RNA sequence: GGGAACGACUCGAGUAGAGUCGAAAAGAAGUCCUCAACCCCAAGGGCGUGGUACUUACGGACCGUCCAGAGGAGGAGGCAGUGGGCCCAGAUAUAACUUCAGGCCCCGAGUGCAACCACCUGAUCGAACUCUCUCAGAUUUCGAUCUGAGAGAGUUAAAAGAAACAACAACAACAAC
Reactivity to DMS in 0.01 (KOAc 150mM, MgCl2 10mM, bicine 150mM(pH8.5), 24C), signal-to-noise 3, nucleotides 027 to 126: g020a100a110g010u020c000c000u000c020a060a090c020c020c010c090a150a140g020g010g000c010g020u010g020g010u000a060c070u010u000a160c220g020g010a090c050c000g020u000c020c000a170g000a120g010g020a120g030g000a050g010g010c080a070g010u010g030g000g010c020c000c060a140g000a040u010a080u010a070a110c150u000u000c020a240g000g000c020c000c000c040g000a060g000u000g000c050a050a110c020c030a090c050c050u000g010a070u000c180g000
Reactivity to 2A3 in 0.01 (KOAc 150mM, MgCl2 10mM, bicine 150mM(pH8.5), 24C), signal-to-noise 1, nucleotides 027 to 126: g060a040a010g030u040c000c000u000c010a040a120c000c000c020c020a060a140g010g000g000c020g000u060g050g030u080a080c020u180u130a030c170g050g000a000c000c010g000u000c010c040a060g050a030g100g020a060g000g020a000g020g060c040a030g060u270g060g010g000c020c020c010a000g060a000u140a000u070a040a240c120u020u030c020a000g030g000c000c000c000c000g020a080g120u110g000c050a000a030c000c000a050c010c040u060g020a030u110c120g020